[RMDB]
RNA sequence: GGGAACGACUCGAGUAGAGUCGAAAAAAUGGGAACUCCCUUCCUCCUGCAGCAGCCUGCCUGCAGCUGUCCUGGUAGAACAGUGUGGACAUUGCAGAAGCUGUCACUGCCCCAGAAAGAAAGCACCGUCCAGCGACCUAUUCGUAGGUCGCUGGACAAAAGAAACAACAACAACAAC
Reactivity to 2A3 in 0.01 (KOAc 150mM, MgCl2 10mM, bicine 150mM(pH8.5), 24C), signal-to-noise 1, nucleotides 027 to 126: a000a050u090g030g000g030a030a000c000u160c000c000c000u000u000c000c000u000c000c000u030g000c000a060g060c010a130g000c000c000u070g090c000c000u000g000c000a000g000c070u000g000u130c000c000u080g080g140u080a060g160a300a210c040a100g130u130g260u300g130g000a000c030a070u000u000g090c000a000g050a190a000g000c000u030g000u030c030a000c090u000g000c000c000c000c000a090g130a000a000a090g080a000a150a100g100c090a000c030c130